[RMDB]
RNA sequence: GGGAACGACUCGAGUAGAGUCGAAAAUCUGGGUGCGAUGAUGAUGGCAGCAAAUUCUGAAAACGUGCUCAGUGUCUUUAUAACAGGAAAGCCGUAAACUUAGAAAUGUAGGCUGCAGCUCGUGUGCCAACCGCUUCCGUUUCGACGGAAGCGGUUGAAAAGAAACAACAACAACAAC
Reactivity to 2A3 in 0.01 (KOAc 150mM, MgCl2 10mM, bicine 150mM(pH8.5), 24C), signal-to-noise 1, nucleotides 027 to 126: u000c080u060g000g000g000u010g000c000g010a010u040g000a000u000g000a050u160g030g040c000a060g010c010a060a000a300u070u030c010u100g000a000a000a000a060c020g000u020g000c000u000c000a000g000u040g010u000c020u160u220u050a120u010a170a000c010a000g000g110a140a000a000g100c000c010g070u060a050a280a000c040u030u050a060g010a000a120a120u010g090u010a030g010g010c000u000g000c040a000g000c060u050c040g030u040g060u000g000c000
Reactivity to DMS in 0.01 (KOAc 150mM, MgCl2 10mM, bicine 150mM(pH8.5), 24C), signal-to-noise 1, nucleotides 027 to 126: u050c090u010g100g000g010u010g020c070g020a020u030g000a100u000g010a130u070g000g050c040a120g000c160a030a060a120u030u040c000u020g050a080a000a040a030c000g050u010g000c000u010c000a230g020u000g000u000c080u000u000u020a050u010a150a080c200a050g000g000a080a010a020g000c000c000g000u000a000a040a160c100u020u040a070g000a130a110a070u000g000u010a070g040g000c000u000g000c120a090g010c000u030c110g000u050g070u020g000c070
An RNA of 177 nucleotides, treated with 2A3 and DMS and read out base by base. Source: RMDB library RFM100, as collected in RNAgym. The RNA was probed in 150 mM KOAc, 10 mM MgCl2 and 150 mM bicine (pH 8.5) at 24 C. The DMS profile rests on 1,536 reads. 2A3 adducts were read by reverse transcription with SuperScript II with manganese.